[RMDB]
About this RNA: Chemical mapping of a 177-nucleotide RNA with DMS and 2A3. The 2A3 profile rests on 10,018 reads. It was measured as part of the RMDB library OK2TRN. For 2A3 the reverse transcriptase was SuperScript II with manganese. Conditions: 150 mM KOAc, 10 mM MgCl2 and 150 mM bicine (pH 8.5), 24 C. Values cover nucleotides 27 to 126.
RNA sequence: GGGAACGACUCGAGUAGAGUCGAAAAAGACCACGUUUGGAGGGAGGGCAGCAUGGUGUCAUGGGCUUGGGGAGGAAAGGAGAGGAAUGGCCCCUUCUUCAGCACUGACUAGUCGUCCUGCACCGUGCCGCUUUAUUAUAUUCGUAUAAUAAAGCGGAAAAGAAACAACAACAACAAC
Reactivity to DMS in 0.01 (KOAc 150mM, MgCl2 10mM, bicine 150mM(pH8.5), 24C), signal-to-noise 6, nucleotides 027 to 126: a080g000a210c030c010a110c150g010u010u010u000g010g000a140g010g010g010a140g000g000g010c090a090g010c040a030u000g000g020u010g000u000c070a070u010g010g010g010c060u000u000g010g010g010g020a100g000g000a040a050a050g020g010a040g010a040g000g010a100a100u000g010g000c040c030c040c030u010u000c020u000u010c030a080g010c130a080c060u000g000a130c070u000a100g010u000c090g010u000c010c020u000g010c040a040c050c030g010u000g010
Reactivity to 2A3 in 0.01 (KOAc 150mM, MgCl2 10mM, bicine 150mM(pH8.5), 24C), signal-to-noise 4, nucleotides 027 to 126: a000g080a040c020c010a050c110g070u070u130u150g060g000a060g010g030g010a120g000g020g000c020a030g000c010a040u090g060g020u070g090u130c070a080u080g000g030g020c050u090u090g020g040g000g000a090g010g050a090a060a020g070g030a110g020a020g050g060a100a090u130g090g020c010c010c010c020u050u050c000u050u010c010a020g010c030a020c050u050g040a050c010u050a020g060u030c020g020u020c010c000u020g000c030a030c010c010g050u040g040